RNA sequence: GGGAACGACUCGAGUAGAGUCGAAAAUGACGCCUAUAACUGGAUGAAGCAUAUUACACAAAAUGGUUUUGUAGGCAACCUUAAUAUGUAUAGUCUUGUCUUUAUCGUUACACGAUAAUCAAUUUAUAAAACAGCUCCCCCUUCGGGGGGAGCUGAACAAUAAGACGAACUUCGGUUCGUCUUAUUGAAAAGAAACAACAACAACAAC
Reactivity to 2A3 in 0.01 (KOAc 150mM, MgCl2 10mM, bicine 150mM(pH8.5), 24C), signal-to-noise 3, nucleotides 027 to 156: u100g050a040c070g000c000c000u010a020u000a050a050c040u040g010g000a010u020g010a010a000g000c000a000u020a010u010u020a040c090a010c080a110a100a070a250u140g000g000u010u010u020u010g010u000a010g000g010c000a000a000c000c000u010u020a020a000u010a000u010g000u020a000u000a020g000u010c000u030u020g040u020c090u020u090u010a010u010c000g010u010u070a060c130a030c040g010a010u030a020a010u080c010a040a090u010u270u190a220u250a130a050a010a030c010a000g000c000u000c000c020c010c020c020u000u040c130g000g000g010g000g000g000a000g000c000u000g000a000a000
Reactivity to DMS in 0.01 (KOAc 150mM, MgCl2 10mM, bicine 150mM(pH8.5), 24C), signal-to-noise 1, nucleotides 027 to 156: u010g050a100c130g020c030c010u000a010u000a030a200c060u030g000g010a050u000g030a110a130g010c020a020u000a010u000u000a000c130a160c140a050a030a150a120u010g020g020u000u000u000u000g020u000a050g020g010c000a030a020c010c020u000u010a010a010u000a020u000g000u030a070u000a300g010u000c000u000u000g020u000c020u010u000u000a010u010c000g010u000u020a150c150a170c000g050a030u000a020a060u020c010a040a120u000u000u020a130u000a130a050a050a190c000a030g010c010u000c000c000c000c000c000u000u000c300g130g120g130g000g000g000a010g010c000u010g000a020a050
The record gives the reactivity of an RNA of 207 nucleotides to 2A3 and DMS. Source: RMDB library M2RFPK, as collected in RNAgym. Conditions: 150 mM KOAc, 10 mM MgCl2 and 150 mM bicine (pH 8.5), 24 C. 2A3 adducts were read by reverse transcription with SuperScript II with manganese.